[RMDB]
RNA sequence: GGGAACGACUCGAGUAGAGUCGAAAAACUGCACCUAGAAAUUCUUGGGAGGCUAUGGCUCUGAACUUUAAGUUAAUAGGUAUUGGCGGUACACCUUGUAUAAAGGUUGCUGCUAUGCAGUCUAAACAUGCCACCAUCUUCGGAUGGUGGAAAAGAAACAACAACAACAAC
Reactivity to DMS in 0.01 (KOAc 150mM, MgCl2 10mM, bicine 150mM(pH8.5), 24C), signal-to-noise 4, nucleotides 027 to 129: a040c030u020g040c010a130c020c010u010a090g020a150a090a120u050u030c000u000u000g000g000g000a080g000g000c030u070a000u040g050g020c040u040c050u000g030a080a060c110u070u040u090a120a100g030u020u020a060a100u050a000g020g020u020a100u040u080g000g000c000g000g060u020a040c130a040c020c000u000u060g030u120a140u140a060a030a020g010g040u020u030g000c060u030g040c000u030a020u040g020c000a050g000u080c050u030a030a030a030c110a050u050g020
Reactivity to 2A3 in 0.01 (KOAc 150mM, MgCl2 10mM, bicine 150mM(pH8.5), 24C), signal-to-noise 9, nucleotides 027 to 129: a000c010u000g000c000a020c010c000u020a000g080a040a130a030u150u050c030u080u080g040g010g010a040g050g000c040u130a130u190g120g020c030u020c030u090g070a100a100c040u070u120u120a060a020g030u030u080a060a020u010a090g020g030u060a120u130u250g020g000c010g010g000u020a030c050a030c120c010u000u010g120u070a160u220a180a050a000g000g000u000u000g000c000u000g000c010u000a030u060g000c010a010g000u000c050u090a060a090a020c060a040u140g030